[RMDB]
RNA sequence: GGGAACGACUCGAGUAGAGUCGAAAAGGCAGCUUCUUGAUUAUCAUUGGUUCUUGCUGAGGAAUGUAUUCUAAUUAGGCCAGUUACCAACACAUAAGAUUCGAUGUUUAUAAAAUGCUGGAUGAGGUGCGGGAACAAAAUUCGUUUUGUUCCCGCAAAAAGAAACAACAACAACAAC
Reactivity to DMS in 0.01 (KOAc 150mM, MgCl2 10mM, bicine 150mM(pH8.5), 24C), signal-to-noise 2, nucleotides 027 to 126: g000g000c010a070g050c050u010u010c010u030u000g000a120u070u010a050u020c090a180u000u010g020g000u000u000c050u000u000g000c100u010g000a120g000g000a100a050u020g000u000a060u030u000c050u020a040a080u000u010a090g050g000c010c000a010g040u000u020a070c100c080a040a070c300a000c170a030u020a020a180g000a110u030u000c110g020a020u000g000u000u000u000a050u040a060a050a070a140u010g020c000u000g010g000a020u000g010a100g020g020
Reactivity to 2A3 in 0.01 (KOAc 150mM, MgCl2 10mM, bicine 150mM(pH8.5), 24C), signal-to-noise 2, nucleotides 027 to 126: g020g050c010a000g000c010u050u000c000u060u000g020a080u010u280a010u040c010a020u000u080g000g000u000u000c000u000u060g010c000u040g000a030g040g040a070a060u200g060u050a160u010u020c050u050a060a040u030u070a110g090g000c000c000a000g010u030u100a130c020c000a080a040c030a010c000a080u210a090a070g030a040u020u110c050g070a010u090g000u020u160u000a100u060a010a010a060a110u120g010c020u060g060g110a050u040g030a060g000g090